[RMDB]
The record gives the reactivity of an RNA of 207 nucleotides to 2A3 and DMS.
It was measured as part of the RMDB library OK3TST.
The reactions ran in a buffer of 150 mM KOAc, 10 mM MgCl2 and 150 mM bicine (pH 8.5), at 24 C.
RNA sequence: GGGAACGACUCGAGUAGAGUCGAAAACACACUUCCCGGGAAGUGUGGCCUAACCCCGGUUAGGGACUGCUCCGGGCACAGCUAGCAGGAAGAGACUGGGAGCACUGACUGGCGGGAUGGAUCGUAUGAUCAGCUGCCAGACAGAUCUAGCGUGCAACCUCAUGGAAAAUUUCGAUUUUCCAUGAGGAAAAGAAACAACAACAACAAC
Reactivity to 2A3 in 0.01 (KOAc 150mM, MgCl2 10mM, bicine 150mM(pH8.5), 24C), signal-to-noise 5, nucleotides 027 to 156: c010a000c000a000c000u030u030c030c050c000g110g210g010a010a010g020u010g010u000g020g030c000c000u030a050a040c000c000c030c060g080g030u050u110a040g010g000g030a010c040u050g000c010u000c010c010g040g110g000c000a010c010a040g020c000u000a000g000c010a000g040g090a120a030g060a020g010a060c010u010g000g020g000a010g000c010a000c000u000g040a020c000u000g010g000c000g020g010g050a100u080g240g000a010u010c010g100u300a120u300g000a000u000c000a010g030c000u000g000c010c000a000g000a010c000a000g010a000u000c000u000a000g010c000g010u010g000c000a030a060
Reactivity to DMS in 0.01 (KOAc 150mM, MgCl2 10mM, bicine 150mM(pH8.5), 24C), signal-to-noise 1, nucleotides 027 to 156: c000a040c010a070c010u010u000c000c080c130g060g010g000a020a030g020u010g020u000g020g040c060c020u000a070a100c050c040c060c050g050g030u000u000a070g000g000g000a060c060u010g030c000u000c020c020g010g000g000c010a070c030a100g070c010u050a070g000c010a040g030g010a110a130g000a220g000a170c050u070g010g000g010a070g030c030a230c010u000g000a150c020u000g000g000c010g000g010g000a140u000g000g000a020u000c020g010u000a090u010g010a020u010c000a230g010c020u000g020c010c000a000g010a120c000a040g000a030u000c010u000a030g000c030g000u000g030c030a070a190